[RMDB]
RNA sequence: GGGAACGACUCGAGUAGAGUCGAAAACAGCGCCAGAAUCGUGGAAACCAGCAUCGUGGCAACCAGAAUCGCGGCCAUCAGAACCGCGAAGAGGGUGGUGCGGCACGCAAGGCUGAGGGUGGUGAAAAUACGAGGUGAUAUUCGUAUCACCUCGUAUAAAAGAAACAACAACAACAAC
Reactivity to DMS in 0.01 (KOAc 150mM, MgCl2 10mM, bicine 150mM(pH8.5), 24C), signal-to-noise 4, nucleotides 027 to 126: c120a110g000c100g010c030c030a090g010a080a090u020c050g030u010g030g000a100a080a140c100c030a060g000c080a060u000c050g010u000g010g010c080a120a090c010c020a100g000a300a200u000c010g020c030g030g000c080c020a150u020c250a140g010a160a110c010c010g010c000g020a020a050g000a280g010g000g010u000g010g030u000g020c050g010g010c050a020c070g010c130a080a080g000g000c020u010g000a100g000g010g000u020g000g000u000g000a110a050a110
Reactivity to 2A3 in 0.01 (KOAc 150mM, MgCl2 10mM, bicine 150mM(pH8.5), 24C), signal-to-noise 2, nucleotides 027 to 126: c010a020g050c010g030c020c000a060g060a190a090u180c070g060u030g050g060a080a050a050c040c020a030g030c020a030u130c060g030u040g060g030c000a000a070c010c000a010g110a070a020u010c000g000c000g030g010c030c010a070u160c030a040g110a070a050c010c000g000c010g010a030a000g030a010g020g040g000u040g000g070u080g010c040g060g010c040a000c030g010c040a050a100g070g000c030u040g040a040g050g030g010u070g000g010u080g100a120a060a000
Conditions: 150 mM KOAc, 10 mM MgCl2 and 150 mM bicine (pH 8.5), 24 C. An RNA of 177 nucleotides, treated with DMS and 2A3 and read out base by base. It was measured as part of the RMDB library OK2TST. For 2A3, 2,377 sequencing reads were counted.